The record gives the reactivity of an RNA of 177 nucleotides to DMS and 2A3.
For 2A3 the reverse transcriptase was SuperScript II with manganese.
DMS adducts were read by reverse transcription with MarathonRT.
RNA sequence: GGGAACGACUCGAGUAGAGUCGAAAAGAAAGAAAGAAAUUGGAGGAUUUGAAGACGUCAUCUUGCAUACUUGGAGGAUUUGAAGACUUAAACUUGCAUAUUUGGAGGAUUUGAAGAUUUCAACUAACCAGUUAAUUAAAUUCGUUUAAUUAACUGGAAAAGAAACAACAACAACAAC
Reactivity to DMS in 0.01 (KOAc 150mM, MgCl2 10mM, bicine 150mM(pH8.5), 24C), signal-to-noise 5, nucleotides 027 to 126: g000a070a090a100g010a090a080a100g000a060a080a090u010u010g010g020a090g010g010a110u010u010u010g000a050a080g010a090c080g010u010c030a040u000c040u000u000g010c060a070u010a070c160u010u000g000g010a060g000g000a080u020u020u020g000a050a050g000a070c090u010u010a060a060a100c060u000u010g000c040a030u010a080u000u010u000g000g010a050g000g000a090u010u010u000g010a060a070g000a130u010u010u010c040a030a090c170u010a090a140
Reactivity to 2A3 in 0.01 (KOAc 150mM, MgCl2 10mM, bicine 150mM(pH8.5), 24C), signal-to-noise 9, nucleotides 027 to 126: g070a010a040a000g060a020a070a020g070a030a090a030u100u100g040g020a040g020g030a050u020u060u160g080a050a020g050a020c020g040u040c010a050u020c030u030u050g020c010a040u040a170c030u030u050g040g030a040g020g000a040u070u080u180g070a070a010g030a030c020u040u060a040a040a040c010u020u050g010c010a040u050a110u260u040u080g050g020a050g020g030a060u040u050u100g030a050a020g030a030u020u050u050c030a050a040c020u040a040a040

The reactions ran in a buffer of 150 mM KOAc, 10 mM MgCl2 and 150 mM bicine (pH 8.5), at 24 C.